[RMDB]
RNA sequence: GGGAACGACUCGAGUAGAGUCGAAAAAAUCGUCGACGCAUCGACGACGGUUCUGCCAUGAGACCGUAACGAGGACAUGUCGCCUCGAAUGGCGUCGGGGAGCCGGCAGCUUACCCCAAGGAUGAGCAAAAGAAUGAAACGUUCGCGUUUCAUUCAAGAAAUCAUACUACUUCGGUAGUAUGAUUUCAAAAGAAACAACAACAACAAC
Reactivity to DMS in 0.01 (KOAc 150mM, MgCl2 10mM, bicine 150mM(pH8.5), 24C), signal-to-noise 1, nucleotides 027 to 156: a020a060u000c020g000u020c010g020a130c130g030c100a090u010c000g000a110c010g010a000c000g050g000u000u000c000u000g000c070c050a150u010g030a160g000a060c000c030g010u010a050a130c010g000a060g000g010a090c090a090u000g050u020c090g020c000c020u000c020g000a040a080u000g020g010c020g040u000c060g000g000g020g000a070g000c020c030g030g000c080a150g000c020u000u020a090c030c000c010c030a110a190g000g000a070u000g000a070g000c080a010a070a100a140g000a010a020u000g010a010a030a010c000g000u010u020c300g010c040g040u020u000u000c000a000u010u020c000a070a120
Reactivity to 2A3 in 0.01 (KOAc 150mM, MgCl2 10mM, bicine 150mM(pH8.5), 24C), signal-to-noise 5, nucleotides 027 to 156: a000a010u040c020g020u010c010g030a050c070g030c160a120u060c020g030a020c000g000a010c000g000g020u020u000c020u070g080c020c010a090u150g040a060g040a090c020c020g010u030a030a030c020g000a000g000g010a040c060a160u210g040u200c090g020c030c010u010c010g020a000a020u040g020g010c020g020u070c030g000g010g000g010a030g060c040c000g090g010c000a010g010c010u050u150a190c010c000c010c000a030a040g130g020a100u110g050a010g070c040a060a070a030a100g000a000a000u010g000a000a000a000c000g040u070u080c230g010c020g110u010u020u000c000a000u000u000c000a010a010

Chemical mapping of a 207-nucleotide RNA with DMS and 2A3. For 2A3, 3,919 sequencing reads were counted. DMS adducts were read by reverse transcription with MarathonRT. It was measured as part of the RMDB library M2RFPK. The reactions ran in a buffer of 150 mM KOAc, 10 mM MgCl2 and 150 mM bicine (pH 8.5), at 24 C. Reactivities are given for positions 27 through 156.